An RNA of 177 nucleotides, treated with 2A3 and read out base by base. The RNA was probed in 150 mM KOAc, 10 mM MgCl2 and 150 mM bicine (pH 8.5) at 24 C. Reactivities are given for positions 27 through 126.
[RMDB]
RNA sequence: GGGAACGACUCGAGUAGAGUCGAAAAGAAUUCAACAAAUUGAUUUUGAUACUGUAGAAACCAUUGAUUGACGAUAUCUACUGGUACUUUUGUGUUGAGGAUCAUUAAAUUCAAAAUUUGUAAUAUCGGCCGAUUAUGACUUCGGUCAUAAUCGGCCAAAAGAAACAACAACAACAAC
Reactivity to 2A3 in 0.01 (KOAc 150mM, MgCl2 10mM, bicine 150mM(pH8.5), 24C), signal-to-noise 1, nucleotides 027 to 126: g060a000a000u150u060c060a000a000c000a020a020a020u000u020g020a000u000u000u000u200g000a000u000a130c000u060g080u000a060g040a220a070a000c000c000a000u000u060g110a000u070u300g080a170c020g130a040u000a000u170c000u020a020c020u150g020g000u000a000c000u000u140u170u190g060u040g000u000u000g020a130g130g000a000u020c000a000u000u060a070a110a110u080u080c120a050a050a050a050u110u040u000g060u040a000a270u210a150u300c000